[RMDB]
RNA sequence: GGGAACGACUCGAGUAGAGUCGAAAAUGUACUGUUAAGAACUGGCUUGGUUGAUAGUUUAAUCAGAUAACGACAUAUGGUAUGCCAGGUGUAACUCAUGUUGACAUAUAAAAACUAGCUUUUAACACCAUGGUAUGCAAUUCGUUGCAUACCAUGGAAAAGAAACAACAACAACAAC
Reactivity to DMS in 0.01 (KOAc 150mM, MgCl2 10mM, bicine 150mM(pH8.5), 24C), signal-to-noise 4, nucleotides 027 to 126: u020g010u000a110c090u000g020u000u000a040a020g010a050a040c010u010g010g000c030u000u000g030g010u000u000g010a070u000a070g010u010u000u010a110a060u020c090a070g000a090u020a070a100c080g020a070c090a020u030a120u010g010g000u010a030u010g010c010c030a070g000g020u020g000u000a070a090c120u000c090a050u020g010u000u000g010a050c070a030u000a080u010a050a050a040a020a040c010u010a030g000c080u000u010u000u010a010a060c110a150
Reactivity to 2A3 in 0.01 (KOAc 150mM, MgCl2 10mM, bicine 150mM(pH8.5), 24C), signal-to-noise 4, nucleotides 027 to 126: u110g020u060a030c030u010g050u100u050a060a030g050a060a010c010u020g020g000c030u020u190g040g000u030u000g030a060u060a150g080u050u120u110a120a080u110c050a040g070a230u090a170a040c060g060a010c030a020u130a070u130g040g040u140a070u100g030c000c000a010g000g020u030g030u030a060a050c030u030c110a070u060g030u040u040g070a040c070a050u140a000u170a060a100a050a010a020c040u020a030g010c030u000u030u020u120a030a010c060a000